Chemical mapping of a 207-nucleotide RNA with DMS. It was measured as part of the RMDB library OK3TST. The RNA was probed in 150 mM KOAc, 10 mM MgCl2 and 150 mM bicine (pH 8.5) at 24 C. DMS adducts were read by reverse transcription with MarathonRT.
[RMDB]
RNA sequence: GGGAACGACUCGAGUAGAGUCGAAAAUCACGUGCGCAUUUAAAUUUGGAUUUAGAUUUAGAUUUACAUUUACAUUUAAAUGCGAGGUUAAAGGUGAAUUUUGACUUAAAUUUAAAUUUAGCUUCUAAUUUGGGUUCAAAUUUAAAUUGAAGGUGGGCUAGUUGAUAUGUUUCGACAUAUUAAUUAGAAAAGAAACAACAACAACAAC
Reactivity to DMS in 0.01 (KOAc 150mM, MgCl2 10mM, bicine 150mM(pH8.5), 24C), signal-to-noise 1, nucleotides 027 to 156: u000c000a030c060g020u000g010c000g020c010a000u000u000u000a010a000a020u000u000u000g000g000a010u000u000u000a000g000a050u000u000u000a120g000a130u000u000u000a040c010a040u000u000u000a080c040a070u000u000u000a000a000a000u010g030c020g000a080g020g020u000u000a000a090a100g020g020u000g010a080a150u000u000u000u000g000a040c040u000u000a010a010a020u000u000u000a010a030a010u000u000u010a040g000c020u000u010c050u010a090a180u010u010u010g000g010g010u000u000c050a010a030a030u020u000u000a000a020a010u000u000g000a040a080g000g030u000g020g010g010